[RMDB]
RNA sequence: GGGAACGACUCGAGUAGAGUCGAAAAGGAGGGCAGCGAAGCUGUCGAGCACGAGACCAAGAUGCUGAUUCCGGCCUAUAAGCAUCGGUCGAGUCGUUAGAGGCCGGUUUAGCGACGAGUGCCUCCAGGGACGUUGCGGCUUCGGUCGCGGCGUCCCAAAAGAAACAACAACAACAAC
Reactivity to 2A3 in 0.01 (KOAc 150mM, MgCl2 10mM, bicine 150mM(pH8.5), 24C), signal-to-noise 4, nucleotides 027 to 126: g020g000a030g020g040g000c010a030g000c100g180a210a030g010c010u000g010u010c020g020a010g000c030a020c040g070a050g000a020c010c000a040a060g000a010u070g000c000u020g040a090u230u030c010c000g000g000c010c000u100a100u020a160a020g010c010a020u050c020g030g000u040c020g010a010g040u000c000g010u000u010a050g010a030g080g000c000c030g000g000u000u020u030a000g000c000g020a040c020g030a060g040u030g020c000c000u000c010c010a010
Reactivity to DMS in 0.01 (KOAc 150mM, MgCl2 10mM, bicine 150mM(pH8.5), 24C), signal-to-noise 3, nucleotides 027 to 126: g010g000a060g000g040g010c000a000g000c050g020a120a110g010c000u000g020u000c020g050a120g000c080a010c040g010a220g020a060c030c040a160a100g030a020u020g000c000u000g010a230u020u010c000c000g020g000c000c000u040a090u010a200a050g000c010a020u010c060g020g000u030c010g000a050g010u000c010g000u000u000a060g000a080g010g020c000c010g000g020u000u020u020a050g020c030g000a100c040g000a090g000u010g010c000c010u000c000c060a210
An RNA of 177 nucleotides, treated with 2A3 and DMS and read out base by base.
The RNA was probed in 150 mM KOAc, 10 mM MgCl2 and 150 mM bicine (pH 8.5) at 24 C.